[RMDB]
RNA sequence: GGGAACGACUCGAGUAGAGUCGAAAACGAGACCGCCACUCAUCAGGGAUAGCAGUGUCACCUGUGGCUGGCCGAAGUAGAAAUUCAGGCCCGGGUUUAUCGACGGGACCCACGGAUAGCUGUCCGGGGAGGAAGGAACGUUCGCGUUCCUUCCUCCAAAAGAAACAACAACAACAAC
Reactivity to DMS in 0.01 (KOAc 150mM, MgCl2 10mM, bicine 150mM(pH8.5), 24C), signal-to-noise 1, nucleotides 027 to 126: c020g000a220g000a090c210c090g040c000c040a040c100u060c030a020u100c030a000g000g050g000a090u000a010g040c300a120g000u000g000u020c000a100c000c050u000g040u000g050g000c150u030g000g000c100c030g030a110a100g000u040a030g000a000a130a140u000u040c030a140g010g000c120c000c020g000g000g000u000u000u020a100u040c180g020a010c030g050g050g030a210c050c000c040a000c000g040g020a000u060a130g000c140u060g030u000c000c050g020g000
Reactivity to 2A3 in 0.01 (KOAc 150mM, MgCl2 10mM, bicine 150mM(pH8.5), 24C), signal-to-noise 3, nucleotides 027 to 126: c000g000a010g150a080c030c010g070c030c030a030c030u060c010a080u070c050a030g000g150g030a070u050a080g080c060a110g080u030g030u280c060a070c140c000u040g040u050g000g020c010u080g010g000c000c030g010a100a000g010u130a060g090a090a090a060u180u160c060a070g050g040c000c000c040g050g010g010u080u120u040a100u110c030g050a060c010g050g060g000a050c000c000c000a030c000g000g000a030u060a140g090c030u060g080u040c000c030g010g000